[RMDB]
RNA sequence: GGGAACGACUCGAGUAGAGUCGAAAACUUGUUCAGACUGACGCGGCUGAGGCGGCCGUACUUGCCCAUGUAGGCCUCGGCCCACGCAUCGAGCAGGGGGACGAUGCCCUCGUAGUACGCCUGGAGAGCCUUGUGCUCCGCGAAGGAGCUGGUCGUGCUUACGACAAUUGUUCGCAAUUGUCGUAAGAAAAGAAACAACAACAACAAC
Reactivity to DMS in 0.01 (KOAc 150mM, MgCl2 10mM, bicine 150mM(pH8.5), 24C), signal-to-noise 1, nucleotides 027 to 156: c040u000u010g020u000u000c010a150g020a130c040u000g030a230c000g030c060g000g000c010u010g000a020g010g030c000g020g020c010c080g020u000a010c130u000u020g030c070c030c030a110u010g020u010a080g000g020c010c100u000c040g040g020c020c000c010a000c060g000c030a240u010c140g000a160g020c050a050g050g010g010g040g040a190c020g020a080u000g010c010c010c020u000c020g040u000a060g020u010a050c050g000c000c020u000g010g000a140g030a110g010c000c050u010u010g000u000g020c010u000c010c020g030c060g010a150a270g010g010a060g020c010u000g040g040u000c040g010u000g000
Reactivity to 2A3 in 0.01 (KOAc 150mM, MgCl2 10mM, bicine 150mM(pH8.5), 24C), signal-to-noise 3, nucleotides 027 to 156: c030u070u110g030u120u060c020a060g010a180c110u050g050a050c040g000c030g000g000c000u060g030a020g020g020c000g030g040c010c030g040u060a060c080u110u150g070c030c000c000a180u250g060u160a050g080g000c010c010u000c010g020g000c000c010c020a050c030g010c010a050u140c160g050a070g020c070a110g000g040g000g000g020a010c010g030a040u070g020c050c000c000u020c020g000u020a030g010u020a020c030g010c010c030u070g040g080a110g020a010g070c000c000u080u060g080u080g050c010u030c010c010g040c060g020a120a070g030g010a060g020c020u040g000g000u020c020g000u060g040